Background:
An RNA of 207 nucleotides, treated with 2A3 and read out base by base. The reactions ran in a buffer of 150 mM KOAc, 10 mM MgCl2 and 150 mM bicine (pH 8.5), at 24 C. The 2A3 profile rests on 1,890 reads.
RNA sequence: GGGAACGACUCGAGUAGAGUCGAAAAAUGAAAUAUGUGCUGACAUUUUAAGCUCUCACUUAUAGUGAGAAAAGCAAUCUUCAGCAAGGUGAUGACUUGUCCAAGGGAAGACAUGGUCGCCCUUGUUCCUUGGGAGAUUUUGUGCUCCCAGGGGAAAAGGCAUUUGGUAAUUCGUUACCAAAUGCCUAAAAGAAACAACAACAACAAC
Reactivity to 2A3 in 0.01 (KOAc 150mM, MgCl2 10mM, bicine 150mM(pH8.5), 24C), signal-to-noise 3, nucleotides 027 to 156: a010u100g050a040a030a010u230a020u080g020u030g040c030u020g020a050c010a110u140u140u090u100a080a030g020c000u000c000u040c010a020c030u160u190a070u080a250g010u020g010a030g000a000a100a000a000g000c010a010a070u040c040u060u050c020a000g000c000a010a020g030g020u090g040a270u060g010a050c020u010u030g000u010c010c090a100a150g140g030g040a070a090g010a030c030a070u140g050g000u000c010g000c020c010c000u000u060g040u050u030c010c000u000u000g000g050g000a030g020a030u090u050u120u250g110u190g030c000u020c000c000c000a010g000g000g000g000a000a080a000